Source: RMDB library M2PK50, as collected in RNAgym. Chemical mapping of a 177-nucleotide RNA with 2A3 and DMS. DMS adducts were read by reverse transcription with MarathonRT. The reactions ran in a buffer of 150 mM KOAc, 10 mM MgCl2 and 150 mM bicine (pH 8.5), at 24 C.
[RMDB]
RNA sequence: GGGAACGACUCGAGUAGAGUCGAAAAGCUCCGGUCUUCGGACCGGAGCAAAGAAGCUCAUAAUGACGCAUACAACGGCGUCAGCGUGAGCAAACGCGGAAAAAACUACCUUGUUCGCAAGGUAGAAGUUCAAGAUGAAGUUCGCUUCAUCUUGAACAAAAGAAACAACAACAACAAC
Reactivity to 2A3 in 0.01 (KOAc 150mM, MgCl2 10mM, bicine 150mM(pH8.5), 24C), signal-to-noise 3, nucleotides 027 to 126: g000c020u010c000c020g040g010u020c020u060u090c200g080g000a000c000c000g010g020a000g010c000a010a000a000g000a040a010g000c000u010c010a010u030a090a020u010g010a000c000g010c010a000u130a260c130a240a050c300g060g000c020g010u000c000a000g010c000g000u000g020a000g000c020a010a050a000c080g010c080g100g060a090a080a010a030a010a000c000u000a000c000c010u000u000g030u060u050c210g000c110a000a000g010g000u000a000g010a020a010
Reactivity to DMS in 0.01 (KOAc 150mM, MgCl2 10mM, bicine 150mM(pH8.5), 24C), signal-to-noise 3, nucleotides 027 to 126: g010c000u000c000c010g000g010u000c000u000u040c240g030g030a010c010c020g010g000a030g030c010a000a010a080g010a150a170g010c000u000c000a000u040a050a300u000g010a000c000g000c000a080u010a120c270a070a120c180g000g000c010g000u000c000a010g000c300g010u000g000a000g020c000a000a030a080c140g020c130g020g000a000a050a030a080a110a100c000u010a010c000c000u000u000g010u000u000c180g000c000a020a000g010g000u000a000g000a020a040